[RMDB]
RNA sequence: GGGAACGACUCGAGUAGAGUCGAAAAACUGCCAUACGUGGCAGAAACACGCCUUACCAGGACUAAACAGCGUGUCUAAAAAACAGUCUUUCAUACCUGAUCUGGAGGGUAGAUCAGGAAUACUAAAAAAAUCGGGUGAAGUUCGCUUCACCCGAAACAUGAAUACUUAGUUCGCUAAGUAUUCAUGAAAAGAAACAACAACAACAAC
Reactivity to 2A3 in 0.01 (KOAc 150mM, MgCl2 10mM, bicine 150mM(pH8.5), 24C), signal-to-noise 3, nucleotides 027 to 156: a000c000u000g000c010c000a020u020a060c170g080u030g000g000c000a000g020a010a010a000c010a000c000g000c000c000u030u070a030c030c060a030g000g030a020c010u060a110a030a020c010a010g000c000g010u010g020u040c110u040a010a010a010a000a000a000c040a010g000u000c000u020u130u110c070a090u080a140c000c000u000g000a010u010c000u020g070g050a080g050g030g040u050a010g000a000u010c010a010g040g000a000a010u090a050c080u140a040a030a020a000a010a030a120u040c000g000g010g000u000g000a000a000g010u050u150c170g040c070u000u000c000a000c000c000c000g000a000a000a000
Reactivity to DMS in 0.01 (KOAc 150mM, MgCl2 10mM, bicine 150mM(pH8.5), 24C), signal-to-noise 3, nucleotides 027 to 156: a090c020u000g010c000c000a080u010a100c170g040u000g010g060c030a030g010a200a130a040c000a020c010g030c000c040u000u010a090c080c050a160g010g020a140c060u000a080a040a090c040a040g020c020g040u000g020u000c120u000a000a040a040a110a040a050c080a090g000u000c030u010u010u010c020a160u010a110c010c000u010g000a020u000c010u010g030g000a110g010g000g020u010a030g000a020u000c010a020g010g020a030a050u010a130c090u000a010a010a060a060a080a090a150u000c000g030g000g030u000g010a020a020g030u000u010c300g000c010u000u000c000a020c000c000c000g000a000a010a030

Source: RMDB library M2RFOK, as collected in RNAgym.
The record gives the reactivity of an RNA of 207 nucleotides to 2A3 and DMS.
The reactions ran in a buffer of 150 mM KOAc, 10 mM MgCl2 and 150 mM bicine (pH 8.5), at 24 C.
For 2A3, 12,773 sequencing reads were counted.
For DMS the reverse transcriptase was MarathonRT.